[RMDB]
RNA sequence: GGGAACGACUCGAGUAGAGUCGAAAACUGAGGCUUGCCAUAGAGGCAGGCCCAGAGAAGGCUGAGAUCUGGAAGCUCAGACCAGAAGCCCCAGUGUCCAUAAAUGCUGGGGUCACACGCCUUGCAGCUAAUGUCAUUGUUUCGACAAUGACAUUAGAAAAGAAACAACAACAACAAC
Reactivity to DMS in 0.01 (KOAc 150mM, MgCl2 10mM, bicine 150mM(pH8.5), 24C), signal-to-noise 9, nucleotides 027 to 126: c010u000g000a130g010g010c000u000u000g010c000c010a240u010a170g010a240g010g010c000a010g000g000c000c000c000a010g000a110g000a070a030g000g000c010u000g000a140g000a120u000c010u000g000g010a110a100g020c070u000c080a080g000a100c000c010a020g000a080a260g000c010c000c000c000a020g020u000g000u010c100c170a150u010a100a110a020u000g010c000u010g000g000g000g010u000c040a030c110a100c220g000c010c000u000u000g020c170a110g000
Reactivity to 2A3 in 0.01 (KOAc 150mM, MgCl2 10mM, bicine 150mM(pH8.5), 24C), signal-to-noise 8, nucleotides 027 to 126: c010u020g010a080g080g000c010u010u000g000c010c010a120u140a290g230a240g070g000c000a000g000g000c010c000c000a010g010a010g010a030a010g000g000c020u030g020a010g010a180u040c020u080g030g060a110a060g040c040u030c120a030g050a110c010c000a010g020a060a010g010c000c010c000c010a000g000u010g030u040c100c060a180u120a180a160a010u100g000c000u000g010g000g010g010u020c010a040c000a010c040g020c010c000u020u090g030c070a050g040

An RNA of 177 nucleotides, treated with DMS and 2A3 and read out base by base. It was measured as part of the RMDB library OK2TRN. The reactions ran in a buffer of 150 mM KOAc, 10 mM MgCl2 and 150 mM bicine (pH 8.5), at 24 C. For DMS, 15,721 sequencing reads were counted.